An RNA of 177 nucleotides, treated with DMS and 2A3 and read out base by base. The reactions ran in a buffer of 150 mM KOAc, 10 mM MgCl2 and 150 mM bicine (pH 8.5), at 24 C. The 2A3 profile rests on 979 reads. For 2A3 the reverse transcriptase was SuperScript II with manganese.

RNA sequence: GGGAACGACUCGAGUAGAGUCGAAAAUACAGUAGGUGCAGGUGUACCGACAGGCCGUUGUCAGCGGGACGAAGACGUUGCGUGCGAACGUCAACGACGACGGCCCGUCGACGUCGGCGGGCGUAACCGCUAGGGACGUCUUCGGACGUCCCUAGCGAAAAGAAACAACAACAACAAC
Reactivity to DMS in 0.01 (KOAc 150mM, MgCl2 10mM, bicine 150mM(pH8.5), 24C), signal-to-noise 1, nucleotides 027 to 126: u080a120c080a120g000u000a010g020g190u000g030c060a150g000g030u000g010u000a060c020c050g000a110c050a010g000g000c000c000g090u000u010g020u030c000a170g000c000g000g000g000a080c060g000a140a160g010a080c000g000u000u010g000c110g040u000g030c300g030a100a000c000g000u060c000a000a060c060g000a060c000g000a300c040g000g030c120c000c000g000u000c060g020a050c050g030u000c000g000g000c000g050g010g000c120g010u050a020a050c000
Reactivity to 2A3 in 0.01 (KOAc 150mM, MgCl2 10mM, bicine 150mM(pH8.5), 24C), signal-to-noise 2, nucleotides 027 to 126: u290a010c090a020g180u040a030g020g030u040g030c050a040g000g070u090g130u190a040c060c000g090a000c030a050g020g080c000c030g040u000u070g000u060c000a040g010c030g000g040g080a090c030g040a060a000g040a000c000g030u010u040g060c080g040u180g060c040g020a040a000c010g000u190c100a000a000c030g000a000c000g000a010c040g030g080c000c000c030g010u000c010g030a020c000g050u020c000g020g020c000g000g000g030c030g020u110a030a030c040